[RMDB]
RNA sequence: GGGAACGACUCGAGUAGAGUCGAAAAGUCACCUUCGGGUGACCAAGUGGAUAUGGAGCGCGACUUGGAUUUACAUGGAACCGUAUAUCGGAAACGAUAUACUCAGUACAUGUUGUCAGUCGCCUUCCUAAGUCGAAAACUCGGUUUCGACCGAGAAGUUUACUACUCGGUUCGCCGAGUAGUAAACAAAAGAAACAACAACAACAAC
Reactivity to DMS in 0.01 (KOAc 150mM, MgCl2 10mM, bicine 150mM(pH8.5), 24C), signal-to-noise 2, nucleotides 027 to 156: g000u000c000a000c000c010u010u000c290g080g050g070u000g010a000c000c050a040a070g020u010g000g000a180u000a220u000g010g000a010g050c190g010c000g050a020c000u000u000g050g010a080u000u000u000a030c030a030u000g020g000a160a140c280c300g010u000a010u010a000u000c000g000g010a150a090a210c010g030a040u000a000u000a000c000u000c020a090g030u010a190c010a000u000g000u000u020g020u000c010a070g000u000c020g000c000c020u000u000c020c010u000a070a170g020u000c010g000a120a060a070a110c020u010c020g000g030u000u000u000c170g000a020c000c000g030a020g000a040a060
Reactivity to 2A3 in 0.01 (KOAc 150mM, MgCl2 10mM, bicine 150mM(pH8.5), 24C), signal-to-noise 4, nucleotides 027 to 156: g010u000c000a000c010c000u050u060c290g110g000g000u010g000a010c010c000a130a100g150u140g220g010a030u040a050u160g000g000a010g010c100g010c010g040a000c010u100u140g150g020a030u280u290u140a010c020a000u000g000g010a010a000c000c000g000u010a000u000a000u010c020g020g030a050a050a070c010g000a000u000a000u000a000c000u000c000a000g000u000a000c000a000u000g000u000u010g000u000c010a000g000u010c000g000c010c000u060u050c010c010u090a090a070g050u040c030g040a070a070a070a120c000u010c010g020g020u040u180u100c230g090a040c020c000g000a000g000a020a020
Annotation:
An RNA of 207 nucleotides, treated with DMS and 2A3 and read out base by base. The 2A3 profile rests on 3,962 reads. The RNA was probed in 150 mM KOAc, 10 mM MgCl2 and 150 mM bicine (pH 8.5) at 24 C. It was measured as part of the RMDB library RNAMAK.